[RMDB]
RNA sequence: GGGAACGACUCGAGUAGAGUCGAAAAGCAGUCAUCGAAGCGCUGAUGCUCUGUGAGGAAGCGUCCGCAGCCGGCGCAAUUCAGCCUGGUGCUGUAACUCAGGCGGAGCUGGCCCUGGUGCUCCGGCUGUCACGUGAGAGUUCGCUCUCACGUGACAAAAAGAAACAACAACAACAAC
Reactivity to 2A3 in 0.01 (KOAc 150mM, MgCl2 10mM, bicine 150mM(pH8.5), 24C), signal-to-noise 2, nucleotides 027 to 126: g040c040a020g050u100c030a050u050c030g120a130a010g110c000g000c160u060g020a050u040g010c040u000c050u080g150u080g020a070g000g050a100a050g020c020g070u030c030c030g010c050a000g040c040c010g000g000c020g000c020a000a070u130u060c030a010g000c000c000u050g030g050u120g000c030u100g080u100a080a020c030u040c100a010g100g000c020g030g010a020g000c020u020g010g000c000c000c040u050g070g020u050g000c010u000c000c010g020g060c000
Reactivity to DMS in 0.01 (KOAc 150mM, MgCl2 10mM, bicine 150mM(pH8.5), 24C), signal-to-noise 2, nucleotides 027 to 126: g010c040a050g000u000c050a060u010c050g020a140a130g010c190g030c040u000g010a060u000g010c050u000c000u000g010u000g010a120g020g010a120a110g030c020g010u010c030c100g000c150a110g020c070c040g000g010c060g000c050a060a100u010u000c040a060g010c040c000u000g010g020u000g020c000u020g010u010a050a090c090u000c030a070g000g000c020g010g000a060g020c030u000g030g020c030c050c010u000g020g030u020g010c010u000c000c000g000g030c070
Source: RMDB library OK2TRN, as collected in RNAgym. This 177-nucleotide RNA was probed chemically with 2A3 and DMS. Values cover nucleotides 27 to 126. In probing experiments dimethyl sulfate is read out at A N1 and C N3, which are open when not base-paired.